[RMDB]
Structure probing data (2A3 and DMS) for a 177-nucleotide construct.
2A3 is a SHAPE reagent: it acylates the 2'-hydroxyl of flexible nucleotides of all four kinds.
RNA sequence: GGGAACGACUCGAGUAGAGUCGAAAAGAAGUGGUCACGGUUACUUCUCCAACCUCAAUGGGCGGAAGCGGUGCAAGCCGUUCCGGGUUCGAUUCCCGGCAUGAAGUGGCCCGUCCGUGACCCGAACCACCAAGUUAGUGUUCGCACUAACUUGGUGAAAAGAAACAACAACAACAAC
Reactivity to 2A3 in 0.01 (KOAc 150mM, MgCl2 10mM, bicine 150mM(pH8.5), 24C), signal-to-noise 2, nucleotides 027 to 126: g080a120a020g080u090g120g000u010c000a010c010g030g070u120u210a090c010u030u020c020u000c020c040a200a180c050c070u160c050a070a100u140g000g010g000c010g000g150a010a000g000c020g090g000u030g050c050a090a080g010c020c010g010u010u020c010c010g000g010g000u010u010c030g020a020u030u030c000c000c010g000g020c030a050u140g000a100a000g030u010g020g020c000c000c000g000u010c000c000g020u000g000a000c000c000c000g000a020a030c030
Reactivity to DMS in 0.01 (KOAc 150mM, MgCl2 10mM, bicine 150mM(pH8.5), 24C), signal-to-noise 2, nucleotides 027 to 126: g020a090a050g050u000g030g030u000c000a010c010g000g010u000u000a080c090u000u010c010u010c090c030a190a120c050c060u010c100a110a000u030g000g000g020c040g000g010a060a010g040c000g000g020u000g000c300a090a140g010c000c020g000u000u000c030c010g000g000g020u000u000c020g010a300u000u000c000c010c000g010g000c120a060u000g030a070a010g000u000g000g010c010c010c000g000u000c000c010g010u000g000a010c000c000c230g020a050a090c080
Source information
The data come from the RNA Mapping Database (RMDB), library RFMREP.